The record gives the reactivity of an RNA of 177 nucleotides to 2A3 and DMS. The DMS profile rests on 3,469 reads. Reactivities are given for positions 27 through 126. Conditions: 150 mM KOAc, 10 mM MgCl2 and 150 mM bicine (pH 8.5), 24 C. The data come from the RNA Mapping Database (RMDB), library RFM100. The 2A3 profile rests on 2,704 reads.
RNA sequence: GGGAACGACUCGAGUAGAGUCGAAAAGGAAGAAAAAAUGGUGAAUAUUCAUUGAUCAAAUCAGUCACUCCACCAAAAUAUGAUGGAUCUUUUGAAUAACUGAUUAAUCAGACGAGAAUAAAGAUAGCUAUUCAGGAGCUUUCGAGCUCCUGAAUAGAAAAGAAACAACAACAACAAC
Reactivity to 2A3 in 0.01 (KOAc 150mM, MgCl2 10mM, bicine 150mM(pH8.5), 24C), signal-to-noise 5, nucleotides 027 to 126: g030g020a030a040g040a020a030a020a020a000a020u250g060g020u120g060a100a050u050a040u070u060c060a040u030u040g010a000u010c050a010a160a000u000c010a010g020u030c010a030c130u000c010c010a050c020c000a050a010a100a030u280a100u130g040a050u020g000g000a010u050c010u060u130u070u160g080a060a050u130a080a020c000u000g000a030u040u060a050a030u030c010a010g090a130c090g100a090g050a160a020u110a050a060a010g060a030u060a040g020
Reactivity to DMS in 0.01 (KOAc 150mM, MgCl2 10mM, bicine 150mM(pH8.5), 24C), signal-to-noise 3, nucleotides 027 to 126: g010g000a110a030g010a050a030a050a100a080a040u050g010g000u010g000a140a160u040a010u010u000c040a080u060u000g000a030u000c040a020a010a020u000c010a030g000u000c120a070c180u000c000c010a020c010c010a020a140a060a120u010a070u010g000a050u020g000g000a020u020c030u020u020u050u040g040a160a070u010a050a070c000u020g000a010u010u000a070a000u000c010a030g000a120c130g000a060g000a040a060u020a010a100a030g020a040u000a040g010